[RMDB]
RNA sequence: GGGAACGACUCGAGUAGAGUCGAAAAAUGCUCCACGUUUUGGUAAUUGUGGCGAUAAUAAAAUGGGCUCCCCUAAAGUAGCUGUGGCUCCGGGAGGUGGCGAGCCUUCACCAUCGUUCAUCAUUGAGUGGUACCAGAGCCCUGGAUUCUGACUGAAUCCUAUGGAUUAUUUCGAUAAUCCAUAGGAAAAAGAAACAACAACAACAAC
Reactivity to 2A3 in 0.01 (KOAc 150mM, MgCl2 10mM, bicine 150mM(pH8.5), 24C), signal-to-noise 4, nucleotides 027 to 156: a000u080g010c030u040c020c000a020c040g030u010u040u100u110g060g010u060a070a070u090u100g030u020g030g050c030g020a020u080a250a050u100a080a160a020a100u140g000g010g000c000u010c010c020c000c000u030a050a070a050g030u040a040g020c050u090g090u150g210g010c010u020c030c060g080g010g020a080g030g050u120g030g020c090g010a020g020c000c000u040u070c030a020c010c000a010u030c010g040u090u120c060a050u020c010a030u050u130g050a040g060u040g020g000u010a050c030c020a000g020a010g080c010c010c010u010g000g040a090u110u000c020u060g070a070c030u120g030a140a020
Reactivity to DMS in 0.01 (KOAc 150mM, MgCl2 10mM, bicine 150mM(pH8.5), 24C), signal-to-noise 2, nucleotides 027 to 156: a060u000g010c030u010c020c010a030c040g000u000u000u000u010g000g030u000a060a040u000u000g050u010g010g010c030g020a130u000a090a140u010a050a040a060a100u000g030g030g030c000u000c010c000c010c040u000a080a090a170g000u000a080g010c060u000g020u010g030g020c010u000c020c020g000g030g010a170g030g040u000g020g020c040g000a100g030c060c040u000u010c040a040c020c010a030u000c070g000u020u010c060a040u010c070a070u000u010g010a110g020u000g010g030u000a090c040c020a040g010a090g010c020c020c010u000g000g010a170u000u000c030u000g010a220c110u000g000a110a190